[RMDB]
Chemical mapping of a 177-nucleotide RNA with 2A3. The 2A3 profile rests on 695 reads.

RNA sequence: GGGAACGACUCGAGUAGAGUCGAAAACGUCUUAAAUUAAAUUUCCCUUGCUGAGCUCAUCUCAGCAAACAAUAACAAAUAACAAAUAAGAACAGCAGGGAACGUUGUUCUUAUUUGUUACAAUUAACUAUCCGCCUAGAUUCGUCUAGGCGGAUAGAAAAGAAACAACAACAACAAC
Reactivity to 2A3 in 0.01 (KOAc 150mM, MgCl2 10mM, bicine 150mM(pH8.5), 24C), signal-to-noise 1, nucleotides 027 to 126: c010g130u060c060u220u290a150a220a220u100u260a200a200a270u020u130u010c000c000c000u000u010g000c000u000g000a030g040c090u060c250a270u150c100u000c000a000g000c000a000a000a000c000a010a050u220a020a000c050a100a050a000u060a010a010c000a000a020a000u020a000a010g000a000a000c000a000g060c010a040g000g130g300a090a000c020g000u000u000g020u010u000c000u010u000a000u000u000u000g020u010u010a010c000a000a050u060u050a060a000

Conditions: 150 mM KOAc, 10 mM MgCl2 and 150 mM bicine (pH 8.5), 24 C.